[RMDB]
RNA sequence: GGGAACGACUCGAGUAGAGUCGAAAAUAUAUAUAGAUCGUUCUAUUAACGAACACGCGCGGGUCGUCGGUGGUCGGCGAGCCCACGGACGAACUUACUCGCGCGAACGACUAAAAAUCGCCAGGAAGUUAGUUUCACGAUUCGUCGUGAAACUAACAAAAGAAACAACAACAACAAC
Reactivity to DMS in 0.01 (KOAc 150mM, MgCl2 10mM, bicine 150mM(pH8.5), 24C), signal-to-noise 1, nucleotides 027 to 126: u000a060u000a130u000a210u000a060g020a080u000c020g030u000u000c060u000a300u010u020a060a080c150g000a070a050c160a080c130g000c020g000c040g030g000g000u000c000g030u000c000g000g030u010g000g010u020c010g020g000c030g040a060g000c240c030c000a000c010g000g000a020c000g000a060a090c200u030u000a100c000u010c020g000c010g020c010g000a000a010c000g000a010c050u000a010a090a030a030a050u010c010g030c000c030a300g030g000a180a140
Reactivity to 2A3 in 0.01 (KOAc 150mM, MgCl2 10mM, bicine 150mM(pH8.5), 24C), signal-to-noise 1, nucleotides 027 to 126: u160a000u000a010u020a000u030a010g080a200u050c000g010u000u000c070u070a210u150u230a190a050c080g050a100a010c050a000c130g000c020g000c020g040g000g000u050c000g000u000c100g070g030u000g000g010u050c010g000g000c030g020a050g000c000c010c000a000c000g010g030a000c020g000a020a040c000u060u080a010c000u070c000g000c010g000c000g030a000a000c000g020a000c000u030a020a020a010a020a020u020c020g000c020c020a010g140g100a100a100